[RMDB]
RNA sequence: GGGAACGACUCGAGUAGAGUCGAAAACACAUGAUGCUGCUGAAUGGAAGCCAGGCUGACAACCCCAUCAAAGUGUCUGACUUCAUGAGGCAUGUCAAGAAGGCCAGGAGAAGCAUGGCGAAACUGGCACUACUCGGGUUUUCGAACCCGAGUAGUGAAAAGAAACAACAACAACAAC
Reactivity to 2A3 in 0.01 (KOAc 150mM, MgCl2 10mM, bicine 150mM(pH8.5), 24C), signal-to-noise 3, nucleotides 027 to 126: c060a000c000a060u070g020a030u050g060c100u010g000c000u000g030a050a040u120g120g120a020a010g000c030c000a010g020g010c040u110g020a040c030a070a160c040c020c030c020a060u080c050a050a200a070g130u100g000u080c010u020g000a020c010u010u020c020a020u020g000a000g020g000c020a000u040g010u000c020a000a060g110a070a050g150g000c000c010a020g020g140a170g040a060a010g010c150a130u220g080g000c030g020a040a030a010c000u010g030g000
Reactivity to DMS in 0.01 (KOAc 150mM, MgCl2 10mM, bicine 150mM(pH8.5), 24C), signal-to-noise 5, nucleotides 027 to 126: c080a110c150a130u010g020a050u000g030c160u010g000c010u000g000a290a070u000g000g020a020a060g030c020c030a020g020g010c030u000g000a070c080a060a300c040c020c010c020a290u000c110a060a060a130g030u000g020u000c020u010g000a030c010u000u010c020a030u000g010a270g010g000c010a020u010g000u000c040a050a080g030a090a070g010g010c020c010a040g000g010a080g010a080a150g010c040a060u010g020g010c030g010a080a090a080c020u000g000g010